[RMDB]
RNA sequence: GGGAACGACUCGAGUAGAGUCGAAAACACGGCUGGCAGUGGUCGGCGGGAUGCGGCACCGACGCCGCGCCGUACUUUCGGAUCUUCAAUCCGAGCGCACAAGCCGAAAAGUUCGAUCCCGCGGGCGCAGUGAUUAGCUGUUCGCAGCUAAUCACUGAAAAGAAACAACAACAACAAC
Reactivity to 2A3 in 0.01 (KOAc 150mM, MgCl2 10mM, bicine 150mM(pH8.5), 24C), signal-to-noise 5, nucleotides 027 to 126: c050a010c000g010g000c010u040g020g000c020a060g050u090g120g020u060c020g040g000c010g000g010g020a080u160g020c000g000g020c020a080c130c200g120a050c110g020c010c000g000c000g000c010c010g030u100a070c020u050u120u020c010g030g010a060u070c060u160u130c200a030a030u000c020c010g020a050g030c040g000c010a080c030a140a000g000c000c000g020a070a070a000a020g040u070u070c020g010a060u040c010c000c000g020c010g010g030g010c040g000
Reactivity to DMS in 0.01 (KOAc 150mM, MgCl2 10mM, bicine 150mM(pH8.5), 24C), signal-to-noise 4, nucleotides 027 to 126: c090a180c020g000g000c000u000g000g020c020a190g040u010g000g010u000c010g000g000c000g030g000g050a070u030g010c020g010g020c000a120c110c120g000a300c120g000c010c010g000c000g020c020c000g000u010a050c020u000u010u030c010g000g000a010u010c200u020u050c250a070a080u000c000c020g000a040g010c140g020c020a090c090a100a070g000c000c000g000a070a080a080a060g000u010u000c060g000a140u010c000c000c000g000c040g010g000g000c030g000